The data come from the RNA Mapping Database (RMDB), libraries RFM100 and RFMREP. This 177-nucleotide RNA was probed chemically with DMS and 2A3. DMS (dimethyl sulfate) methylates the pairing face of unpaired adenines and cytosines. 2A3 adducts were read by reverse transcription with SuperScript II with manganese.
RNA sequence: GGGAACGACUCGAGUAGAGUCGAAAAAGGGUGAAAUCACACCACGUGAUGGGAGUACGACCUGAUAGGGCGCUGCAGAGGCCCACUAUUAGGCUAGUAUAAAAAUCUCUGCUGUACAUGGCACAUGCUAUCACUGCUCGUUCGCGAGCAGUGAUAGAAAAGAAACAACAACAACAAC
Reactivity to DMS in 0.01 (KOAc 150mM, MgCl2 10mM, bicine 150mM(pH8.5), 24C), signal-to-noise 3, nucleotides 027 to 126: a020g020g020g010u020g000a100a040a050u040c070a050c030a140c070c080a100c200g000u000g000a050u030g010g020g000a200g020u010a040c020g020a140c010c000u010g010a040u000a020g010g000g000c280g010c050u000g000c130a100g020a120g010g050c000c000c000a070c060u010a030u030u010a000g000g000c050u000a120g030u020a050u000a000a100a040a110a090u000c000u000c000u020g000c000u020g020u040a060c130a050u020g000g000c030a080c160a090u020g000
Reactivity to 2A3 in 0.01 (KOAc 150mM, MgCl2 10mM, bicine 150mM(pH8.5), 24C), signal-to-noise 4, nucleotides 027 to 126: a000g080g020g000u040g030a080a110a040u070c040a030c030a030c070c010a050c030g020u020g050a060u070g000g040g010a070g020u040a030c040g020a060c020c000u000g010a010u010a030g020g000g000c140g000c070u090g010c030a020g000a000g150g040c010c010c030a100c010u010a010u030u040a020g000g020c050u050a050g090u080a050u220a110a150a010a020a030u060c030u000c010u020g010c020u020g030u060a110c100a140u050g060g000c060a010c010a080u100g040
Values cover nucleotides 27 to 126. For DMS the reverse transcriptase was MarathonRT.